[RMDB]
RNA sequence: GGGAACGACUCGAGUAGAGUCGAAAACUGCAGGUGGAGUGUCGAUCUCCUGAUUCGGCGCCUUUAUAACUGCCAAUUCUGACAGUUUCGACUACGCGCUCGCCGCGUAAUCGCGGGCCUGUGUUUGCGCUGCUCUGAGCGAACAUAUCGGCCCGACGUAUGAAACUGAGUUCGCUCAGUUUCAUACAAAAGAAACAACAACAACAAC
Reactivity to DMS in 0.01 (KOAc 150mM, MgCl2 10mM, bicine 150mM(pH8.5), 24C), signal-to-noise 1, nucleotides 027 to 156: c040u010g010c010a060g000g040u010g020g010a070g040u000g020u000c020g040a080u000c020u000c110c070u000g000a130u000u000c000g040g010c000g010c030c010u000u010u010a090u000a060a050c000u020g000c010c020a090a220u010u000c180u000g020a050c020a040g020u010u000u000c000g020a040c010u000a040c000g030c030g020c050u000c170g050c080c000g000c000g050u000a010a010u000c000g010c030g020g030g030c010c010u000g020u000g000u000u000u010g010c000g020c000u000g030c190u010c130u020g000a050g010c000g000a020a050c020a060u000a070u000c130g010g020c000c010c000g000a010c090
Reactivity to 2A3 in 0.01 (KOAc 150mM, MgCl2 10mM, bicine 150mM(pH8.5), 24C), signal-to-noise 6, nucleotides 027 to 156: c030u040g000c010a020g000g040u060g030g040a100g020u050g040u040c010g010a040u010c080u070c080c100u200g000a050u090u090c010g010g010c000g050c020c010u090u240u070a270u110a120a090c050u090g060c010c020a070a100u190u120c050u090g080a120c020a040g010u010u020u080c000g010a000c010u090a060c020g020c000g020c080u140c110g150c200c010g000c020g000u030a040a050u070c050g000c010g050g000g010c000c000u010g010u000g010u010u020u050g060c050g000c020u160g040c030u040c090u190g080a030g010c000g000a000a010c010a000u040a050u150c080g010g000c000c000c000g000a000c000